[RMDB]
RNA sequence: GGGAACGACUCGAGUAGAGUCGAAAACUUUUAGGGUUUGAUUCUAGUAAACCAGUCACUAAGAAAUACACUUACUCCUUCUUGCCUAAAGAAGACGGCGAUGUGUUGUUGGCUGAGUUUGACACUUGUAGAAAGCGCUUCGGCGCUUUCAAAAGAAACAACAACAACAAC
Reactivity to 2A3 in 0.01 (KOAc 150mM, MgCl2 10mM, bicine 150mM(pH8.5), 24C), signal-to-noise 1, nucleotides 027 to 129: c040u040u000u000u170a020g030g070g070u000u030u050g020a090u060u000c050u050a030g000u000a000a020a000c000c000a000g000u000c000a000c040u070a300a000g080a000a110a000u250a020c090a000c000u000u200a130c010u000c000c000u000u000c020u000u000g090c000c010u090a280a000a000g000a260a020g000a030c010g000g000c060g010a190u040g050u000g010u020u000g100u000u010g000g000c000u000g000a110g260u020u000u000g000a000c110a000c000u000u130g000u000a130
Reactivity to DMS in 0.01 (KOAc 150mM, MgCl2 10mM, bicine 150mM(pH8.5), 24C), signal-to-noise 2, nucleotides 027 to 129: c000u000u010u020u010a100g000g050g020u000u000u020g000a110u000u000c070u010a070g010u000a060a000a020c000c000a000g020u040c030a050c050u030a150a080g000a010a020a010u000a080c010a040c010u030u010a220c120u010c100c000u000u000c040u020u000g030c160c090u000a000a000a000g040a020a020g020a030c060g070g090c100g000a090u070g000u000g000u000u030g040u000u000g030g000c000u000g000a090g000u000u000u020g070a150c230a000c160u030u030g020u020a000